An RNA of 207 nucleotides, treated with 2A3 and read out base by base.
RNA sequence: GGGAACGACUCGAGUAGAGUCGAAAAGAGAUGGAGUCUUGCUCUGUUGCCCAGGCUGGAGUGCAGUGGCAUGAUCUCGGCUCACUGCAACCUCCGCCUCCCAGGUUCAGGCAAUUCUCCUGCCUCAGCCUCCCACGUAGCUGGGAUUACAGGCUACUCCACAUCAUCUCUUCGGAGAUGAUGUGGAAAAAGAAACAACAACAACAAC
Reactivity to 2A3 in 0.01 (KOAc 150mM, MgCl2 10mM, bicine 150mM(pH8.5), 24C), signal-to-noise 2, nucleotides 027 to 156: g000a000g010a010u020g020g000a010g020u010c000u060u020g000c010u030c010u300g070u110u090g010c000c000c010a010g020g000c150u300g010g000a020g020u280g040c000a000g000u000g050g010c030a040u180g180a300u240c150u070c170g050g000c010u060c100a000c000u000g000c010a040a150c040c010u010c000c000g020c000c000u000c050c070c030a020g000g010u000u000c000a010g000g020c000a000a000u000u000c000u000c030c000u030g090c010c000u000c000a050g060c000c010u020c020c050c000a020c060g030u040a000g000c060u010g060g000g000a080u070u120a100c140a020g030g140c000u000a000c000
Reactivities are rounded to 0.1 and cut off at 0 and 3. For 2A3, 830 sequencing reads were counted. Reactivities are given for positions 27 through 156.